[RMDB]
The record gives the reactivity of an RNA of 177 nucleotides to DMS and 2A3. The 2A3 profile rests on 2,134 reads. Reactivities are given for positions 27 through 126. 2A3 adducts were read by reverse transcription with SuperScript II with manganese. For DMS, 1,448 sequencing reads were counted. Source: RMDB library OK1LIB, as collected in RNAgym. DMS adducts were read by reverse transcription with MarathonRT.

RNA sequence: GGGAACGACUCGAGUAGAGUCGAAAAAUAGGCCUAACAACCAUGAAAAAUAAACAUAGCCCAUUUGUUUGCCACGUUUAUCUUCUUCAACACUGGAUAACAUAAUGACCCAAAUAGGACUAACUGCCGGUCCAAAGUUAUUCGUAACUUUGGACCGAAAAGAAACAACAACAACAAC
Reactivity to DMS in 0.01 (KOAc 150mM, MgCl2 10mM, bicine 150mM(pH8.5), 24C), signal-to-noise 1, nucleotides 027 to 126: a060u030a160g000g000c010c000u000a030a020c180a080a230c060c100a050u000g000a040a060a080a120a050u040a120a060a000c060a130u000a150g000c020c030c000a170u000u000u000g000u010u020u050g000c050c010a050c070g060u000u000u000a020u000c010u000u030c000u000u020c030a050a040c080a020c070u000g000g000a060u000a080a070c060a110u000a070a040u000g000a080c000c000c020a020a040a060u020a080g000g000a010c100u010a060a110c070u040g020c060
Reactivity to 2A3 in 0.01 (KOAc 150mM, MgCl2 10mM, bicine 150mM(pH8.5), 24C), signal-to-noise 4, nucleotides 027 to 126: a010u180a030g010g020c000c000u060a120a040c040a050a020c030c060a020u170g120a050a030a020a040a010u160a030a020a040c040a070u160a050g050c010c020c000a010u020u020u070g040u040u010u070g000c000c010a070c050g040u040u050u030a090u040c050u130u030c010u080u070c040a060a000c020a060c140u070g120g000a020u040a090a000c000a010u100a100a060u170g090a070c020c010c030a010a110a000u100a060g010g080a000c010u020a070a030c030u040g050c070